[RMDB]
RNA sequence: GGGAACGACUCGAGUAGAGUCGAAAAUCUUUAUAGUCACUAAAAAUACGAUUAUUAUGUUCGCGCGUACCAUCCAUGUUUGCGCUAGCAAAGAUAGGUAAAACUCGAUCUUUUUCGCGCGGUAGACGCCCACAAGGAAGUUCGCUUCCUUGUGGGCAAAAGAAACAACAACAACAAC
Reactivity to DMS in 0.01 (KOAc 150mM, MgCl2 10mM, bicine 150mM(pH8.5), 24C), signal-to-noise 1, nucleotides 027 to 126: u000c030u010u000u000a010u000a100g010u000c030a230c140u020a050a080a140a170a100u030a080c170g000a020u000u000a090u020u000a070u000g040u000u000c030g010c010g000c020g000u000a040c060c090a130u040c090c100a030u000g000u000u000u010g000c010g020c120u030a030g010c030a030a010a020g000a060u000a080g010g010u000a050a020a040a050c070u000c220g000a080u020c040u010u000u000u010u000c000g000c000g000c000g000g000u020a060g030a000c170
Reactivity to 2A3 in 0.01 (KOAc 150mM, MgCl2 10mM, bicine 150mM(pH8.5), 24C), signal-to-noise 1, nucleotides 027 to 126: u050c010u050u280u070a130u030a000g030u030c000a020c180u180a300a110a110a000a000u170a200c050g030a000u120u090a000u110u050a200u300g050u010u060c010g020c000g000c000g010u000a070c000c030a010u000c020c000a030u140g140u090u060u010g010c090g000c020u030a070g000c000a000a000a110g040a010u040a150g050g000u030a050a100a020a050c070u030c100g030a120u110c050u020u140u050u100u080c030g050c000g000c000g010g030u030a110g020a030c080